[RMDB]
RNA sequence: GGGAACGACUCGAGUAGAGUCGAAAAUAUCGACACCGGCCCUUUCCGCCGUGUUCGGUAAUAAAAUAACCUGGCUUAUUAGUCCGAAUUCAGACAAAUAUAAAUAAAUCCUGCUCAAAAUUAAAAAAUCAAAACCGUAGUUCGCUACGGUUUUGAUAAAAGAAACAACAACAACAAC
Reactivity to 2A3 in 0.01 (KOAc 150mM, MgCl2 10mM, bicine 150mM(pH8.5), 24C), signal-to-noise 1, nucleotides 027 to 126: u000a000u000c000g000a000c020a010c050c070g000g010c000c000c000u020u140u020c020c010g010c000c000g000u000g040u060u020c000g000g000u010a020a070u070a000a210a000a000u050a000a000c010c010u000g010g040c060u020u060a070u120u140a290g020u040c000c050g070a060a140u060u150c010a010g010a000c010a050a190a000u150a070u080a290a030a020u050a000a010a000u000c000c000u040g020c000u050c000a150a190a050a020u070u300a040a040a110a000a040